[RMDB]
RNA sequence: GGGAACGACUCGAGUAGAGUCGAAAAAUUACUCGUGAAGAGGCUGUAAGGCAAGUUCGAAGCUGGAUAGGCUUCGAUGUUGAGGGUGCUCAUGCUUCCCGUAAUGCAUGUGGCACCAAUGUGCCUCCAGUCAGGUACAGUUCGCUGUACCUGACUGAAAAGAAACAACAACAACAAC
Reactivity to 2A3 in 0.01 (KOAc 150mM, MgCl2 10mM, bicine 150mM(pH8.5), 24C), signal-to-noise 2, nucleotides 027 to 126: a020u020u030a050c000u040c080g080u090g160a120a060g010a030g000g020c050u100g100u210a040a010g080g000c050a060a170g080u030u040c010g010a000a000g020c030u050g060g180a260u120a180g030g000c000u000u000c010g000a000u040g120u070u070g040a040g040g030g060u000g020c000u000c010a000u010g000c010u100u020c040c020c010g010u140a060a030u200g020c020a000u000g000u150g050g000c000a000c010c020a000a010u050g000u000g010c010c000u000c010
Reactivity to DMS in 0.01 (KOAc 150mM, MgCl2 10mM, bicine 150mM(pH8.5), 24C), signal-to-noise 2, nucleotides 027 to 126: a070u010u010a110c040u000c030g040u000g010a100a150g000a020g000g020c020u010g000u030a100a090g000g010c000a050a080g010u010u010c000g010a020a000g000c000u000g010g020a160u030a140g010g010c000u000u000c000g000a010u000g000u000u020g020a150g010g020g030u000g010c000u000c000a000u000g020c000u000u010c010c070c040g000u010a090a060u000g000c010a000u010g010u010g030g000c000a010c000c010a010a010u010g010u000g000c010c000u000c070
The data come from the RNA Mapping Database (RMDB), library 15KREP.
The record gives the reactivity of an RNA of 177 nucleotides to 2A3 and DMS.
2A3 adducts were read by reverse transcription with SuperScript II with manganese.
The 2A3 profile rests on 1,326 reads.
Reactivities are rounded to 0.1 and cut off at 0 and 3.
Conditions: 150 mM KOAc, 10 mM MgCl2 and 150 mM bicine (pH 8.5), 24 C.
The DMS profile rests on 2,272 reads.